[RMDB]
RNA sequence: GGGAACGACUCGAGUAGAGUCGAAAACCUGGUUUAGGGUUCCAGGCUAGCCCUAUCUAUCGGUCGAGAUGCGAGCGCUUAAGCUCAAAUUGAGUGGCUGAGUUAGUGGUGAACGUAUCCCUAUGUUCUUCAGAGAGAUUUUCGAAUCUCUCUGAAGAAAAGAAACAACAACAACAAC
Reactivity to DMS in 0.01 (KOAc 150mM, MgCl2 10mM, bicine 150mM(pH8.5), 24C), signal-to-noise 3, nucleotides 027 to 126: c000c010u010g020g010u000u010u000a030g020g000g010u080u010c030c020a000g010g000c110u020a300g000c010c010c000u000a020u000c070u030a120u010c020g010g020u000c010g020a300g000a000u000g000c300g020a010g040c000g040c280u040u010a050a180g010c000u000c000a000a200a020u000u000g000a160g070u020g010g000c000u000g000a030g010u000u010a010g020u030g020g000u010g010a120a160c130g000u020a060u040c010c000c030u000a280u030g010u000u000
Reactivity to 2A3 in 0.01 (KOAc 150mM, MgCl2 10mM, bicine 150mM(pH8.5), 24C), signal-to-noise 6, nucleotides 027 to 126: c010c000u010g020g020u040u120u120a050g020g010g010u060u020c000c000a010g000g050c020u030a020g000c000c000c010u010a020u030c020u030a130u060c000g000g020u000c020g010a020g000a160u030g010c000g000a010g000c020g010c130u220u230a170a040g000c010u010c000a010a020a000u020u020g010a040g040u230g030g000c000u010g010a010g010u010u030a070g010u140g150g010u040g030a050a020c050g030u080a100u110c020c010c000u030a080u110g090u010u000